[RMDB]
RNA sequence: GGGAACGACUCGAGUAGAGUCGAAAAGCUGUUCACAGACUAAAUGAUGGUGGGUCCGCUCAUGGCGAGUGGGCUUAAGAUAUAGUCGGGUCGCUCUGGAAACAGGGCAGCGAAUCGCAGUACUUCACCGUUCCGUAGGUGAACCUGCGGAAGGAUCGAUGUAUCGUGUCUUCGGACACGAUACAUCAAAAGAAACAACAACAACAAC
Reactivity to 2A3 in 0.01 (KOAc 150mM, MgCl2 10mM, bicine 150mM(pH8.5), 24C), signal-to-noise 2, nucleotides 027 to 156: g030c000u020g000u150u110c030a050c100a180g000a010c010u070a050a140a000u130g090a030u060g060g080u060g050g000g000u000c000c000g000c000u000c000a120u290g240g040c150g040a000g000u000g000g040g040c000u000u010a000a000g020a000u080a000u040a120g010u020c000g000g010g090u070c050g010c030u000c000u020g000g020a000a040a010c000a000g000g030g010c080a020g020c100g080a030a070u100c090g000c010a000g000u070a090c050u000u000c060a030c080c020g180u110u040c030c010g000u080a000g000g040u150g080a100a230c000c000u000g030c000g000g020a000a030g070g020a060u210c130
Chemical mapping of a 207-nucleotide RNA with 2A3. For 2A3, 803 sequencing reads were counted. The data come from the RNA Mapping Database (RMDB), library ARCHII. The reactions ran in a buffer of 150 mM KOAc, 10 mM MgCl2 and 150 mM bicine (pH 8.5), at 24 C.